An RNA of 177 nucleotides, treated with 2A3 and DMS and read out base by base. Reactivities are rounded to 0.1 and cut off at 0 and 3. For DMS, 2,184 sequencing reads were counted. For 2A3, 1,901 sequencing reads were counted. For DMS the reverse transcriptase was MarathonRT. The reactions ran in a buffer of 150 mM KOAc, 10 mM MgCl2 and 150 mM bicine (pH 8.5), at 24 C.
[RMDB]
RNA sequence: GGGAACGACUCGAGUAGAGUCGAAAAGUGCUGGCAGGAGCGCAGCCGAUGGCGGCGUGGAUAGCACUCUUCUUCAUGUGCUUCUACAUCUGCGCAUACGCGUGGUCGUGGGGGCCGCUGCCCUGGCGAGUCCGUGAAGGUUCGCCUUCACGGACUCAAAAGAAACAACAACAACAAC
Reactivity to 2A3 in 0.01 (KOAc 150mM, MgCl2 10mM, bicine 150mM(pH8.5), 24C), signal-to-noise 2, nucleotides 027 to 126: g020u000g010c000u000g050g030c020a040g000g140a050g030c030g000c020a000g020c020c020g290a240u260g000g010c040g030g000c000g020u000g040g070a150u260a070g000c000a010c040u040c030u170u000c010u130u100c070a140u150g060u080g000c000u000u010c000u020a010c010a020u030c010u030g000c040g000c020a080u130a300c150g000c040g010u050g010g010u060c110g000u020g000g000g010g000g010c030c000g000c000u020g020c000c000c030u020g020g010c010
Reactivity to DMS in 0.01 (KOAc 150mM, MgCl2 10mM, bicine 150mM(pH8.5), 24C), signal-to-noise 2, nucleotides 027 to 126: g000u000g020c010u000g010g000c040a040g020g010a250g020c000g000c010a020g050c030c030g020a130u000g010g030c050g000g030c020g020u000g010g020a080u000a030g010c020a010c000u000c100u010u000c080u020u010c090a170u000g020u030g000c000u000u000c000u010a020c050a110u000c010u000g010c010g000c020a170u010a100c210g020c010g010u000g000g010u000c070g020u010g000g010g000g000g030c010c020g000c120u000g010c040c020c140u000g020g020c230